[RMDB]
RNA sequence: GGGAACGACUCGAGUAGAGUCGAAAAAGUAAAUAAUGCCGCUGGUAAGGGGUACAUCUGCAGUUUGACACCAGAGCCCAUAGUCUUAAAUCCUUCUUUUGACUAUUGCAUGAAUGUUUGACUAUUGGGAAAGCAGUAAAAGAAGAAAGGAAACAGACGGUGACGAUAAUUUCGAUUAUCGUCACCGAAAAGAAACAACAACAACAAC
Reactivity to 2A3 in 0.01 (KOAc 150mM, MgCl2 10mM, bicine 150mM(pH8.5), 24C), signal-to-noise 1, nucleotides 027 to 156: a000g010u010a000a040a080u070a110a120u210g050c030c010g080c090u000g130g000u130a170a060g000g100g000g060u010a010c010a070u010c030u000g000c010a010g000u000u110u170g060a030c020a020c020c060a030g020a030g160c020c020c000a000u030a030g010u000c000u010u030a090a010a090u040c000c010u040u000c020u100u040u040u050g030a050c000u000a050u100u080g080c040a060u140g070a230a000u020g070u080u110u030g060a050c040u040a080u210u070g000g000g010a040a040a000g010c020a000g010u030a010a110a000a000g010a020a000g000a050a000a050g070g000a000a170a000c110a040g100a060
The record gives the reactivity of an RNA of 207 nucleotides to 2A3. Source: RMDB library OK3TST, as collected in RNAgym. The 2A3 profile rests on 497 reads. The RNA was probed in 150 mM KOAc, 10 mM MgCl2 and 150 mM bicine (pH 8.5) at 24 C.